[RMDB]
RNA sequence: GGGAACGACUCGAGUAGAGUCGAAAAUUAAAGGUGGUUACAUAACUAGAGCAUAUGGUUCACCACAGGAUCAUCAGCAUGCAGUGCAACUUGAGUUAUCCCAGUUAAACUAUAUGUCUGAGGCCGAGGUAGUGUCCUCUUUCGAGAGGACACUACCAAAAGAAACAACAACAACAAC
Reactivity to 2A3 in 0.01 (KOAc 150mM, MgCl2 10mM, bicine 150mM(pH8.5), 24C), signal-to-noise 1, nucleotides 027 to 126: u060u050a060a040a010g060g000u050g010g000u030u100a010c020a050u090a030a040c090u100a060g060a020g150c060a060u040a020u100g180g030u040u100c020a010c030c000a020c000a030g000g040a070u040c030a030u000c000a070g000c000a000u050g000c020a000g010u000g040c010a010a010c010u010u120g010a010g090u160u100a120u110c030c010c000a000g000u000u020a020a020a010c020u010a010u000a000u180g080u160c020u010g010a020g000g030c020c010g060a040
Reactivity to DMS in 0.01 (KOAc 150mM, MgCl2 10mM, bicine 150mM(pH8.5), 24C), signal-to-noise 1, nucleotides 027 to 126: u000u020a070a120a170g000g070u000g050g010u020u020a100c090a040u000a040a080c170u000a130g020a210g010c160a110u000a090u020g000g000u000u000c180a050c040c100a060c020a120g020g010a040u000c060a080u010c080a020g000c020a000u000g000c080a020g000u000g020c290a000a000c000u000u000g010a080g000u000u020a140u010c000c000c000a070g000u000u000a130a150a040c020u000a070u000a080u040g000u000c020u000g020a050g020g060c030c080g000a070
Overview:
Chemical mapping of a 177-nucleotide RNA with 2A3 and DMS. 2A3 adducts were read by reverse transcription with SuperScript II with manganese. Conditions: 150 mM KOAc, 10 mM MgCl2 and 150 mM bicine (pH 8.5), 24 C. Reactivities are given for positions 27 through 126.